[RMDB]
RNA sequence: GGGAACGACUCGAGUAGAGUCGAAAAGAUAUGGACAAGGUCCGAUAAGUUACAGUCGGAAACGACUGAAUAACUUUUGACGGACCUGUCCUAAGUCAAAAGCUCCAGGUGUUCGCACCUGGAGCAACGUAUGAUAGGACUUCGGUCCUAUCAUACGAAAAGAAACAACAACAACAAC
Reactivity to 2A3 in 0.01 (KOAc 150mM, MgCl2 10mM, bicine 150mM(pH8.5), 24C), signal-to-noise 4, nucleotides 027 to 126: g000a010u020a010u050g000g000a000c090a190a200g000g020u010c000c020g030a110u160a300a050g000u010u010a010c010a000g010u010c000g010g000a040a020a030c000g000a010c010u010g010a050a140u070a020a010c010u000u090u190u300g090a040c000g000g000a010c000c010u000g000u000c000c000u000a030a010g020u010c020a060a060a040a190g020c000u000c000c010a000g000g000u030g060u090u190c300g060c130a000c010c000u000g000g000a000g000c000a000a000
Reactivity to DMS in 0.01 (KOAc 150mM, MgCl2 10mM, bicine 150mM(pH8.5), 24C), signal-to-noise 3, nucleotides 027 to 126: g000a030u000a240u010g000g000a000c000a050a110g020g010u000c000c000g010a100u020a030a020g020u000u000a050c000a010g020u010c000g010g000a060a050a100c020g010a000c000u000g000a140a130u010a000a010c000u000u020u010u000g010a260c070g000g000a010c000c010u000g000u000c000c000u000a000a090g000u000c010a050a100a160a200g000c000u000c000c000a010g000g020u000g040u000u000c210g020c000a000c000c000u000g000g010a000g010c010a000a010
About this RNA
The record gives the reactivity of an RNA of 177 nucleotides to 2A3 and DMS. It was measured as part of the RMDB library TTRDEL. For 2A3 the reverse transcriptase was SuperScript II with manganese. The DMS profile rests on 3,907 reads.